[RMDB]
RNA sequence: GGGAACGACUCGAGUAGAGUCGAAAAUACAACGGAGCAAAAGUGUGAAAAGUCCUCUAGCCGAAAACACACAGAGAGGACAUGACGGCAGCUCCGAUUAUAAAAUAUAACACAGAAUAAAAUUGAACUUACAUCUUAGAUUCGUCUAAGAUGUAAGAAAAGAAACAACAACAACAAC
Reactivity to DMS in 0.01 (KOAc 150mM, MgCl2 10mM, bicine 150mM(pH8.5), 24C), signal-to-noise 3, nucleotides 027 to 126: u000a060c120a160a120c010g000g000a020g030c000a040a080a230a130g010u000g000u020g010a060a120a100a180g000u010c000c000u000c010u000a080g030c070c050g000a070a060a080a100c130a030c150a080c140a070g000a040g020a030g020g000a000c000a030u000g000a060c020g000g010c210a090g010c010u000c000c000g000a060u000u010a080u000a060a050a150a020u010a060u000a060a050c050a060c080a050g010a110a080u010a050a030a050a160u020u010g010a130a130
Reactivity to 2A3 in 0.01 (KOAc 150mM, MgCl2 10mM, bicine 150mM(pH8.5), 24C), signal-to-noise 3, nucleotides 027 to 126: u100a010c020a070a060c020g000g010a010g000c010a000a030a110a090g050u060g000u060g080a080a090a060a020g000u020c020c000u000c020u020a070g050c050c040g150a110a060a050a050c100a010c020a010c040a030g090a000g010a000g150g010a010c000a000u040g050a000c010g010g030c020a030g000c010u000c000c000g010a010u000u030a000u020a000a070a020a020u220a030u070a170a030c040a010c010a030g200a220a080u150a100a120a040a070u130u160g000a010a020